RNA sequence: GGGAACGACUCGAGUAGAGUCGAAAACCAAGGUAGUUCGCUACCUUGGAAAGAAAGCUCGAGCGAAGGGAAGGGAAAGGACGCUCGAGCAACCCACCCAAAAAAGAGCAUGCUUCGGCAUGCUCAACCGUAUUAGAUCGUUCGCGAUCUAAUACGGAAAAGAAACAACAACAACAAC
Reactivity to 2A3 in 0.01 (KOAc 150mM, MgCl2 10mM, bicine 150mM(pH8.5), 24C), signal-to-noise 3, nucleotides 027 to 126: c010c000a010a000g000g010u000a000g020u050u080c220g030c100u000a010c000c010u000u000g000g020a040a010a010g050a020a100a000g000c010u000c010g000a000g000c020g050a090a100g050g030g060a130a120g090g000g060a120a120a160g110g030a020c000g000c000u000c010g030a020g000c000a010a010c020c000c010a030c010c040c030a060a220a010a000a010a040g000a000g000c000a000u010g000c010u060u050c240g070g000c000a000u010g000c000u040c010a000a000
Reactivity to DMS in 0.01 (KOAc 150mM, MgCl2 10mM, bicine 150mM(pH8.5), 24C), signal-to-noise 1, nucleotides 027 to 126: c010c000a070a000g000g020u000a000g010u020u010c270g000c000u000a000c000c000u060u000g040g050a000a080a060g030a110a130a110g020c000u000c000g010a010g000c000g010a200a160g000g000g010a130a070g000g040g010a090a140a100g050g000a220c000g010c000u000c040g000a030g000c000a000a000c020c030c040a110c050c080c000a000a120a000a060a120a100g000a000g010c000a000u000g010c000u000u020c260g040g000c000a000u000g000c000u000c000a010a010

Background: Chemical mapping of a 177-nucleotide RNA with 2A3 and DMS. The DMS profile rests on 803 reads. 2A3 adducts were read by reverse transcription with SuperScript II with manganese. Reactivities are given for positions 27 through 126. DMS adducts were read by reverse transcription with MarathonRT. Conditions: 150 mM KOAc, 10 mM MgCl2 and 150 mM bicine (pH 8.5), 24 C.